[RMDB]
Notes: The record gives the reactivity of an RNA of 177 nucleotides to 2A3 and DMS.
RNA sequence: GGGAACGACUCGAGUAGAGUCGAAAAGCGCGCAUAGCAGAAGUAUCGCUGCGCGAAGUGGAUCAUGGCCUGAUCGAAGCAGCCCGCUCCAUGGGCGCAAACCGCUGGACCAUCGUGCGCGAAGUGACCUACUGCUAGGAUUCGUCCUAGCAGUAGGAAAAGAAACAACAACAACAAC
Reactivity to 2A3 in 0.01 (KOAc 150mM, MgCl2 10mM, bicine 150mM(pH8.5), 24C), signal-to-noise 4, nucleotides 027 to 126: g040c020g010c010g010c010a040u120a110g030c040a060g040a170a020g090u150a040u210c060g000c040u050g020c020g000c010g030a060a010g020u070g060g020a050u060c020a080u120g020g010c000c040u050g010a070u150c080g070a080a010g020c010a010g010c000c010c010g000c020u010c020c010a080u140g030g050g000c000g000c000a030a060a040c040c010g010c040u050g010g070a050c020c010a040u080c060g010u040g030c010g000c020g040a030a020g090u080g090a050
Reactivity to DMS in 0.01 (KOAc 150mM, MgCl2 10mM, bicine 150mM(pH8.5), 24C), signal-to-noise 5, nucleotides 027 to 126: g010c020g020c030g020c020a050u010a090g040c080a050g000a080a130g030u000a090u000c150g000c050u000g010c020g020c020g010a080a130g010u000g010g000a040u010c040a090u010g010g010c110c040u000g010a040u010c140g000a120a120g010c050a070g000c080c030c120g010c180u000c030c040a050u000g000g000g010c010g010c050a020a050a100c110c080g010c040u000g010g000a080c090c060a100u010c120g010u000g010c020g000c000g000a090a070g010u000g010a250
Reactivities are rounded to 0.1 and cut off at 0 and 3. For DMS the reverse transcriptase was MarathonRT. For 2A3, 5,010 sequencing reads were counted.